[RMDB]
RNA sequence: GGGAACGACUCGAGUAGAGUCGAAAACGACCGCAGUUCGCUGCGGUCGAAAAGAACUGACUACCGAUCGCCUAGCCGGUGUCAGUUUAAGGGCGGAGAUUAAAACCCUGACGUUCGCGUCAGGGAACACUCAAAUACACUUCGGUGUAUUUGAGUGAAAAGAAACAACAACAACAAC
Reactivity to 2A3 in 0.01 (KOAc 150mM, MgCl2 10mM, bicine 150mM(pH8.5), 24C), signal-to-noise 3, nucleotides 027 to 126: c020g020a000c000c000g030c020a010g010u060u110c170g050c140u000g000c000g010g000u010c010g010a000a000a000a010g010a000a000c000u000g010a020c020u110a060c090c020g050a080u130c050g110c060c060u120a080g060c050c000g000g000u000g000u000c000a000g000u000u030u050a040a020g020g020g020c110g070g040a160g000a070u180u170a010a050a120a160c000c010c000u010g000a000c000g020u020u040c270g000c010g120u000c000a000g000g000g000a010a000
Reactivity to DMS in 0.01 (KOAc 150mM, MgCl2 10mM, bicine 150mM(pH8.5), 24C), signal-to-noise 3, nucleotides 027 to 126: c020g000a020c000c000g040c010a010g010u000u020c180g020c000u010g030c000g010g000u000c000g000a020a040a120a160g000a010a010c000u000g010a010c000u010a020c010c010g010a090u000c120g010c100c080u000a100g010c180c000g000g010u000g000u000c000a000g000u000u000u010a060a090g010g000g010c070g010g000a110g010a150u000u020a040a060a110a160c000c000c000u000g000a010c000g010u000u000c220g010c000g020u000c000a010g010g000g010a010a050